RNA sequence: GGGAACGACUCGAGUAGAGUCGAAAACGCGGCCGAUACGCCGUAGGUCGUCGGUGUCCCGACCAACUGCGAGGACGUGAAGGUUGCGGCGGCCACCCAUCAGUUCGCGAACGUUGAUGACGCCGGGGACUGUUCCUAAUUUUCGCGAAACGGCCUCGAUAAUUGAAGAGUUCGCUCUUCAAUUAUCAAAAGAAACAACAACAACAAC
Reactivity to DMS in 0.01 (KOAc 150mM, MgCl2 10mM, bicine 150mM(pH8.5), 24C), signal-to-noise 1, nucleotides 027 to 156: c040g020c030g030g040c000c030g000a130u000a090c080g050c020c010g000u000a110g010g020u000c030g010u000c030g020g020u000g030u000c050c040c020g030a100c050c010a130a050c060u000g000c090g000a080g010g030a130c020g040u000g000a160a160g000g020u000u020g000c020g010g000c110g020g040c040c030a070c020c020c000a150u000c040a070g010u000u000c030g000c020g000a080a060c090g000u000u000g000a150u000g040a080c030g030c030c030g020g000g010g000a050c010u000g000u010u010c030c010u020a020a110u000u000u000u000c050g020c020g000a060a110a120c060g010g010c000c010u020c070
Reactivity to 2A3 in 0.01 (KOAc 150mM, MgCl2 10mM, bicine 150mM(pH8.5), 24C), signal-to-noise 5, nucleotides 027 to 156: c040g000c030g020g000c020c040g070a060u080a220c030g000c040c030g040u030a040g000g020u060c120g140u010c010g060g000u090g050u060c030c020c000g010a040c040c030a120a060c030u050g010c000g040a080g050g050a120c040g060u050g050a120a050g030g000u010u040g020c000g030g020c020g060g010c020c030a030c030c010c010a070u080c020a030g040u040u020c020g010c030g100a140a060c070g050u040u100g080a140u140g020a040c020g010c030c030g000g020g050g000a010c020u060g060u070u040c010c000u030a090a130u060u120u060u110c030g010c020g020a060a070a020c020g030g010c010c030u060c070
Chemical mapping of a 207-nucleotide RNA with DMS and 2A3. DMS adducts were read by reverse transcription with MarathonRT. High 2A3 reactivity points to a flexible backbone, as in loops and unpaired stretches. For DMS, 5,004 sequencing reads were counted. The RNA was probed in 150 mM KOAc, 10 mM MgCl2 and 150 mM bicine (pH 8.5) at 24 C. Source: RMDB library OK3TST, as collected in RNAgym. For 2A3 the reverse transcriptase was SuperScript II with manganese.